[RMDB]
RNA sequence: GGGAACGACUCGAGUAGAGUCGAAAAGAUAUGGAUCCCGGCCGGGGAUGGCAGGCGUUGAAAUCGGAAACGAUGGAGCCUGCAUCAAGAAUGGGAUCCUAAGUCAAAAGCAAUCUUCGGAUUGCAACGUAAGAGAAGUCUUCGGACUUCUCUUACGAAAAGAAACAACAACAACAAC
Reactivity to 2A3 in 0.01 (KOAc 150mM, MgCl2 10mM, bicine 150mM(pH8.5), 24C), signal-to-noise 1, nucleotides 027 to 126: g000a020u100a030u160g000g010a010u010c010c000c000g010g010c030c020g140g050g090g050a010u040g190g120c000a010g020g020c040g210u300u130g010a110a080a010u020c000g000g060a030a030a080c020g000a020u010g030g000a020g000c000c000u020g000c010a010u010c000a010a040g020a010a030u050g030g000g000a000u010c010c000u000a030a010g030u010c030a030a050a010a150g000c000a000a010u000c000u050u140c300g190g010a010u000u010g000c010a020a020
Reactivity to DMS in 0.01 (KOAc 150mM, MgCl2 10mM, bicine 150mM(pH8.5), 24C), signal-to-noise 3, nucleotides 027 to 126: g000a040u020a300u000g010g000a000u000c000c010c010g000g030c300c060g000g000g000g020a010u000g010g000c010a000g000g010c000g020u000u020g000a070a180a050u000c000g000g010a140a070a170c020g000a020u000g000g010a170g000c010c000u000g010c000a010u010c020a100a050g000a100a300u010g000g000g000a010u000c000c000u000a000a080g010u000c050a060a030a090a060g010c010a000a000u000c010u000u000c190g020g020a020u000u000g010c010a090a110

This 177-nucleotide RNA was probed chemically with 2A3 and DMS. The reactions ran in a buffer of 150 mM KOAc, 10 mM MgCl2 and 150 mM bicine (pH 8.5), at 24 C. The DMS profile rests on 1,710 reads. For 2A3 the reverse transcriptase was SuperScript II with manganese. It was measured as part of the RMDB library TTRDEL.